[RMDB]
RNA sequence: GGGAACGACUCGAGUAGAGUCGAAAAUACUGGGACUCCCAAGCCGAUAUUACCUGUGUUCCAAAGGACUUGCUUCAAGGAGAAGAACCUGUUAGGCAGCAAAAUGUGACUACUAUACAUGGAACGCGGUCCAGAAUGGAUUCGUCCAUUCUGGACCAAAAGAAACAACAACAACAAC
Reactivity to DMS in 0.01 (KOAc 150mM, MgCl2 10mM, bicine 150mM(pH8.5), 24C), signal-to-noise 2, nucleotides 027 to 126: u000a070c040u010g000g010g000a080c070u000c000c020c020a090a190g000c000c010g020a060u000a030u020u000a120c000c000u000g040u010g000u010u000c010c000a050a300a070g000g000a140c090u000u000g020c010u000u000c080a060a110g040g000a150g000a100a070g000a100a110c020c000u000g010u010u010a130g020g010c110a040g010c050a020a080a100a050u010g010u000g010a120c060u000a060c110u000a120u010a080c140a110u010g020g030a030a060c050g010c080
Reactivity to 2A3 in 0.01 (KOAc 150mM, MgCl2 10mM, bicine 150mM(pH8.5), 24C), signal-to-noise 1, nucleotides 027 to 126: u070a080c060u120g000g010g110a080c000u070c040c000c000a000a010g010c010c040g040a050u050a030u100u150a130c010c010u050g030u040g010u060u020c030c000a000a050a050g070g030a040c040u060u130g090c010u030u090c050a070a060g170g030a090g090a070a090g040a100a060c000c020u000g040u060u090a070g040g060c020a000g040c040a000a130a120a070u170g080u040g040a020c010u050a050c020u060a110u000a150c020a090u060g030g010a010a010c000g000c080
The record gives the reactivity of an RNA of 177 nucleotides to DMS and 2A3. Values are in units of 0.01, from 0 to 300, in steps of 10. The DMS profile rests on 956 reads. The 2A3 profile rests on 1,026 reads. Conditions: 150 mM KOAc, 10 mM MgCl2 and 150 mM bicine (pH 8.5), 24 C. For 2A3 the reverse transcriptase was SuperScript II with manganese.